[RMDB]
RNA sequence: GGGAACGACUCGAGUAGAGUCGAAAAUGGCGGUCUCUGGCAUAUUGGUCCCUAAUCCGGCCAGAAGGGUGCCUGGCUUUGCCGCAGGUGGCAUGGGGGUGUCCCAUAGCGGGUGGGUGCCUGGUGGCGAUAUAUUAAUAUUCGUAUUAAUAUAUCGAAAAGAAACAACAACAACAAC
Reactivity to 2A3 in 0.01 (KOAc 150mM, MgCl2 10mM, bicine 150mM(pH8.5), 24C), signal-to-noise 5, nucleotides 027 to 126: u100g020g010c030g010g090u030c010u010c020u030g010g020c010a010u020a070u090u140g040g010u090c050c000c000u030a060a060u060c030c030g050g010c020c000a010g040a050a060g040g020g050u020g010c000c000u000g020g020c000u070u060u110g020c010c000g000c030a020g010g090u090g050g000c040a040u060g020g000g000g000g050u040g060u040c000c000c000a030u030a020g020c020g000g010g050u070g020g000g010u030g000c000c000u020g020g030u040g030g000
Reactivity to DMS in 0.01 (KOAc 150mM, MgCl2 10mM, bicine 150mM(pH8.5), 24C), signal-to-noise 8, nucleotides 027 to 126: u030g000g000c010g000g000u000c010u000c010u000g000g000c010a010u000a020u020u010g010g000u010c020c040c050u020a110a080u030c130c170g010g000c010c010a030g010a090a100g010g010g010u010g000c030c010u010g000g010c060u000u010u030g010c030c020g010c080a070g010g020u010g000g010c060a050u010g010g000g000g010g020u010g000u010c010c000c010a060u010a070g030c080g010g000g010u030g000g000g000u010g000c030c020u010g000g020u010g010g010
Chemical mapping of a 177-nucleotide RNA with 2A3 and DMS. For DMS the reverse transcriptase was MarathonRT. The 2A3 profile rests on 10,458 reads.